Chemical mapping of a 207-nucleotide RNA with 2A3. 2A3 adducts were read by reverse transcription with SuperScript II with manganese. It was measured as part of the RMDB library OK3TST. The RNA was probed in 150 mM KOAc, 10 mM MgCl2 and 150 mM bicine (pH 8.5) at 24 C.
RNA sequence: GGGAACGACUCGAGUAGAGUCGAAAACACGGGGGCAGAGGUUUCGCCGGACAUCCUUCUAAAAACGUCCGCGCUGGCAUGCGGUUGUCUCGUUCGGGAGAUUGGGUGGGGCAUAUGCGAGCACAAGUUCGUCGUUUUCGACGACAGGGUAAACGCCGAUAGGAAGGUAUUUCGAUACCUUCCUAUCAAAAGAAACAACAACAACAAC
Reactivity to 2A3 in 0.01 (KOAc 150mM, MgCl2 10mM, bicine 150mM(pH8.5), 24C), signal-to-noise 2, nucleotides 027 to 156: c050a020c050g000g000g000g000g000c040a020g010a020g000g000u030u000u120c050g000c010c000g020g000a000c000a060u120c010c030u190u100c120u220a050a080a010a100a070c060g000u000c000c000g000c050g000c030u040g080g040c050a010u070g010c020g050g020u120u100g000u010c010u000c030g090u150u110c030g000g060g000a170g000a090u050u250g020g020g020u150g020g000g060g030c030a050u110a000u210g000c000g000a030g000c030a020c000a110a000g040u070u060c000g010u020c010g040u030u060u210u300c040g000a000c000g000a000c000a000g020g020g010u040a130a160a010c180g040c120c040